[RMDB]
RNA sequence: GGGAACGACUCGAGUAGAGUCGAAAAGAAAGAAAGAAAUAGUAAUAAGAAAGAUGAGCUCAUUGUAAUAUGAGCUUCAUUUAUACAUUUCAUAUUACCAUUAGCUCAUCUUUUUUAUUACUACCAAAUUGUUGCAAUAAUUCGUUAUUGCAACAAUAAAAGAAACAACAACAACAAC
Reactivity to DMS in 0.01 (KOAc 150mM, MgCl2 10mM, bicine 150mM(pH8.5), 24C), signal-to-noise 5, nucleotides 027 to 126: g010a090a110a120g010a120a100a070g000a110a110a200u000a010g000u000a000a010u000a010a000g000a000a010a010g000a010u000g000a010g000c000u000c080a010u000u000g010u000a010a010u000a000u000g000a010g000c230u000u010c120a040u020u020u040a090u030a150c130a100u010u010u010c000a010u000a000u000u000a000c010c050a010u000u000a010g000c020u000c000a000u000c000u010u000u000u000u000u000a000u000u000a010c010u000a030c050c060a060a100
Reactivity to 2A3 in 0.01 (KOAc 150mM, MgCl2 10mM, bicine 150mM(pH8.5), 24C), signal-to-noise 3, nucleotides 027 to 126: g080a000a060a000g130a030a150a010g040a020a110a000u040a020g000u000a000a010u000a000a000g000a000a000a000g010a000u010g000a000g010c000u000c010a000u000u010g000u000a000a000u000a000u000g000a000g000c000u010u010c000a000u000u040u050a150u040a020c070a050u080u110u010c000a000u010a000u000u000a000c000c000a000u000u000a000g000c000u000c010a020u000c000u000u000u000u000u000u000a000u000u000a000c000u000a040c000c000a020a050